Conditions: 150 mM KOAc, 10 mM MgCl2 and 150 mM bicine (pH 8.5), 24 C. Chemical mapping of a 177-nucleotide RNA with DMS and 2A3. 2A3 is a SHAPE reagent: it acylates the 2'-hydroxyl of flexible nucleotides of all four kinds. The 2A3 profile rests on 5,016 reads. The DMS profile rests on 3,504 reads. For DMS the reverse transcriptase was MarathonRT.

[RMDB]
RNA sequence: GGGAACGACUCGAGUAGAGUCGAAAAUCUUGCACCUUCGGGUGCAAGAAAAUGUAAGCGCAUGCGAGCGCACAGCGCACGCUGAAAUACUGCGCAAAAGAAAAACUCAGCACUUCGGUGCUGAGAACCCUACCAGUAUGUUCGCAUACUGGUAGGGAAAAGAAACAACAACAACAAC
Reactivity to DMS in 0.01 (KOAc 150mM, MgCl2 10mM, bicine 150mM(pH8.5), 24C), signal-to-noise 3, nucleotides 027 to 126: u000c000u000u000g000c010a000c000c000u000u010c190g030g000g010u000g020c000a010a000g010a000a020a060a100u010g000u010a110a120g000c000g010c000a070u000g010c010g010a020g040c000g030c020a060c170a110g020c010g010c020a060c010g010c010u040g000a080a090a140u000a070c230u000g010c010g030c000a080a030a060a090g000a050a080a070a110a160c000u000c000a000g000c000a010c000u000u040c130g010g020u000g000c000u000g000a000g000a010a030
Reactivity to 2A3 in 0.01 (KOAc 150mM, MgCl2 10mM, bicine 150mM(pH8.5), 24C), signal-to-noise 3, nucleotides 027 to 126: u010c000u000u000g000c000a010c000c010u050u060c250g140g000g000u010g010c000a000a000g000a000a020a010a010u130g030u060a170a070g000c000g020c000a010u060g010c010g020a010g010c020g000c030a070c050a210g000c010g000c010a010c010g020c010u020g040a040a040a020u190a100c130u060g010c010g000c000a040a010a060a120g080a020a090a020a020a020c000u000c000a000g010c000a000c000u020u090c220g100g000u010g000c000u000g030a000g000a000a000